The record gives the reactivity of an RNA of 177 nucleotides to DMS and 2A3.
RNA sequence: GGGAACGACUCGAGUAGAGUCGAAAAGGAUCGUGUCCCUGGGAGGCGGAUAGGAUUCAGCACUCUAGAAUUGUCUCACCAUUUGAAUAGGUGCUGCUCAGCCCUUUUGAGUCUGUCAUCGGAAAGACAGGUGUAAUUACUUCGGUAAUUACACCUGAAAAGAAACAACAACAACAAC
Reactivity to DMS in 0.01 (KOAc 150mM, MgCl2 10mM, bicine 150mM(pH8.5), 24C), signal-to-noise 7, nucleotides 027 to 126: g000g000a050u000c040g010u000g000u010c010c000c040u020g010g010g010a080g010g010c080g000g000a090u010a080g000g010a100u010u010c040a070g000c050a050c030u030c020u010a070g000a090a090u020u010g010u010c060u010c060a100c130c060a110u020u020u010g000a130a090u010a030g000g000u000g000c030u000g000c210u010c070a090g000c060c040c020u010u010u000u010g000a080g010u000c050u000g000u010c030a040u010c060g000g010a060a070a110g000a160
Reactivity to 2A3 in 0.01 (KOAc 150mM, MgCl2 10mM, bicine 150mM(pH8.5), 24C), signal-to-noise 9, nucleotides 027 to 126: g040g010a050u050c040g030u050g070u050c010c000c000u000g030g010g010a020g020g030c030g010g020a030u060a060g070g010a020u050u030c020a020g040c030a020c020u110c020u030a040g070a130a120u090u070g040u030c030u020c050a120c030c010a050u070u080u170g150a160a090u080a080g020g000u020g020c020u020g020c020u020c030a050g010c000c000c000u030u100u060u100g030a030g020u010c040u050g060u040c010a060u060c050g060g090a110a040a000g070a040

The RNA was probed in 150 mM KOAc, 10 mM MgCl2 and 150 mM bicine (pH 8.5) at 24 C. Source: RMDB libraries RFM100 and RFMREP, as collected in RNAgym.